[RMDB]
RNA sequence: GGGAACGACUCGAGUAGAGUCGAAAAAGCAAGGCUCGCAGCUCCUUCUGCACGAUUUGAGGGUCUUGGCAUAAAUAGGACCAGGAAGGCAGAGGGAAGCCUUCCAACCACUGCAGUGCAAUUGCUCCCCUAUAAAAGCCAAGCAGUUCAGGUCCAGCGGAUGUCUAUAGUUCGCUAUAGACAUCCGAAAAGAAACAACAACAACAAC
Reactivity to DMS in 0.01 (KOAc 150mM, MgCl2 10mM, bicine 150mM(pH8.5), 24C), signal-to-noise 2, nucleotides 027 to 156: a030g000c070a050a050g010g000c000u000c020g000c010a040g010c200u000c080c050u000u000c110u010g040c070a140c130g000a200u010u010u000g050a070g020g040g010u000c020u000u010g040g020c010a070u000a040a130a120u000a150g080g010a020c000c030a300g030g000a010a050g010g040c030a060g000a070g010g010g010a100a070g010c050c040u020u000c010c030a110a130c070c010a110c020u000g020c050a140g000u000g070c110a030a100u000u010g000c060u010c030c020c020c000u000a300u000a020a060a120a120g020c020c010a070a080g040c020a020g020u010u000c040a080g020g030u000c000c010a100g000
Reactivity to 2A3 in 0.01 (KOAc 150mM, MgCl2 10mM, bicine 150mM(pH8.5), 24C), signal-to-noise 4, nucleotides 027 to 156: a000g050c010a010a000g010g020c010u070c080g000c010a010g020c020u070c030c020u100u120c040u040g030c040a060c170g180a170u090u100u260g190a270g000g000g000u000c020u020u020g040g010c020a040u140a110a090a060u140a110g000g000a000c010c030a020g000g000a000a010g000g010c010a000g020a020g080g000g010a000a000g010c010c000u010u000c000c000a030a030c040c020a000c010u020g000c010a030g040u010g240c020a140a240u150u170g030c020u140c020c000c010c020u050a060u070a250a090a010a000g000c020c020a040a000g020c010a000g000u030u050c040a020g000g000u000c000c000a000g000

Conditions: 150 mM KOAc, 10 mM MgCl2 and 150 mM bicine (pH 8.5), 24 C. The record gives the reactivity of an RNA of 207 nucleotides to DMS and 2A3. The DMS profile rests on 2,008 reads.